[RMDB]
RNA sequence: GGGAACGACUCGAGUAGAGUCGAAAAUCGACCGGAUGACUGGCCAGGAACACCUUUACGCCGGAGGGGAUCAUGCCGAACGCGCCGCGCGGAUCACCCGCUGCAAGUGCGCCUCGUCAACAUCUGCGCCGGCGCGCACAACAAUGUCGCCAAUGACCGGAGAAGCUAUGUUCGCAUAGCUUCUCCGAAAAGAAACAACAACAACAAC
Reactivity to 2A3 in 0.01 (KOAc 150mM, MgCl2 10mM, bicine 150mM(pH8.5), 24C), signal-to-noise 1, nucleotides 027 to 156: u010c000g010a010c020c000g070g010a050u060g040a090c070u090g040g000c030c020a090g040g010a020a060c010a000c010c000u030u080u110a040c030g020c000c000g060g000a020g000g070g000g030a020u060c020a030u070g010c030c000g040a060a030c010g070c000g000c010c000g000c000g000c000g000g000a040u070c030a090c050c030c000g040c050u080g060c080a300a080g090u080g110c100g000c000c060u020c040g080u040c040a000a070c050a030u000c000u040g020c000g000c030c020g020g000c010g040c000g000c000a120c000a030a100c010a090a100u060g000u090c010g020c130c000a120a140u260g050a010c010
The record gives the reactivity of an RNA of 207 nucleotides to 2A3. Conditions: 150 mM KOAc, 10 mM MgCl2 and 150 mM bicine (pH 8.5), 24 C. It was measured as part of the RMDB library OK3TST.